This 177-nucleotide RNA was probed chemically with DMS and 2A3. Reactivities are given for positions 27 through 126. Conditions: 150 mM KOAc, 10 mM MgCl2 and 150 mM bicine (pH 8.5), 24 C. For DMS the reverse transcriptase was MarathonRT. High 2A3 reactivity points to a flexible backbone, as in loops and unpaired stretches. For DMS, 1,911 sequencing reads were counted.
[RMDB]
RNA sequence: GGGAACGACUCGAGUAGAGUCGAAAAGGGUCCACGCCGGGAGUGCAGCGCCCGAACUCGUGGACGUGCAUCCCGUGCAUCCCGGGCGUCAGGCCGCGCACGUCCACCGUGACCUGCACGCCCGCGCGACAGGAGAUCCGUUCGCGGAUCUCCUGUCAAAAGAAACAACAACAACAAC
Reactivity to DMS in 0.01 (KOAc 150mM, MgCl2 10mM, bicine 150mM(pH8.5), 24C), signal-to-noise 2, nucleotides 027 to 126: g030g030g000u010c000c040a120c050g040c250c000g000g010g010a040g000u000g020c040a020g000c140g000c020c020c030g000a120a070c190u000c220g020u010g000g010a030c000g010u000g000c060a170u000c030c010c010g020u000g000c070a160u030c050c070c020g020g020g010c050g000u000c090a060g010g030c070c060g000c030g020c060a030c070g000u000c070c010a040c110c060g000u010g000a010c010c010u000g000c070a000c020g010c000c000c010g010c040g000c110
Reactivity to 2A3 in 0.01 (KOAc 150mM, MgCl2 10mM, bicine 150mM(pH8.5), 24C), signal-to-noise 1, nucleotides 027 to 126: g070g000g070u080c030c020a040c030g020c030c010g000g020g010a040g050u110g030c050a030g040c050g020c110c010c000g050a130a110c090u060c280g040u070g000g020a040c000g010u000g020c010a070u070c010c010c010g000u080g010c040a130u120c040c030c000g060g010g000c050g040u130c110a050g060g000c010c010g040c010g020c020a030c060g050u020c040c020a010c010c010g060u050g060a100c000c000u010g000c040a000c010g030c060c030c000g000c010g010c000